[RMDB]
RNA sequence: GGGAACGACUCGAGUAGAGUCGAAAAGAUAUGGAUCCCAGGAUGCUCAACAGCUUAGUCGGAAACGACUAAGACAUGAGCGCCUGUGGAUCCUAAGUCAAAAGAUGUUCAGUUCGCUGAACAUCAACCAUAGAGGCUUCUUCGGAAGCCUCUAUGGAAAAGAAACAACAACAACAAC
Reactivity to 2A3 in 0.01 (KOAc 150mM, MgCl2 10mM, bicine 150mM(pH8.5), 24C), signal-to-noise 1, nucleotides 027 to 126: g000a000u110a070u170g000g000a010u000c000c000c000a010g040g010a170u220g000c000u010c030a000a180c060a220g080c020u030u000a000g010u000c020g010g040a050a120a100c010g000a010c000u000a020a000g030a000c000a070u140g010a030g000c020g020c060c000u090g080u300g020g010a000u010c000c000u000a020a010g030u000c020a020a020a040a130g000a000u010g010u030u000c020a010g020u060u150c270g000c110u000g010a010a040c010a010u000c010a010a010
Reactivity to DMS in 0.01 (KOAc 150mM, MgCl2 10mM, bicine 150mM(pH8.5), 24C), signal-to-noise 1, nucleotides 027 to 126: g000a000u000a300u010g000g000a000u010c000c000c000a010g000g020a090u030g000c020u010c000a060a180c300a240g010c010u010u010a000g010u010c000g000g000a090a070a300c000g000a050c000u000a010a020g010a030c080a230u000g000a010g040c000g000c010c000u010g000u030g040g000a000u010c000c010u000a010a120g010u000c040a100a110a120a130g000a060u000g000u010u000c000a030g010u000u000c300g000c010u000g000a030a010c000a010u010c010a030a150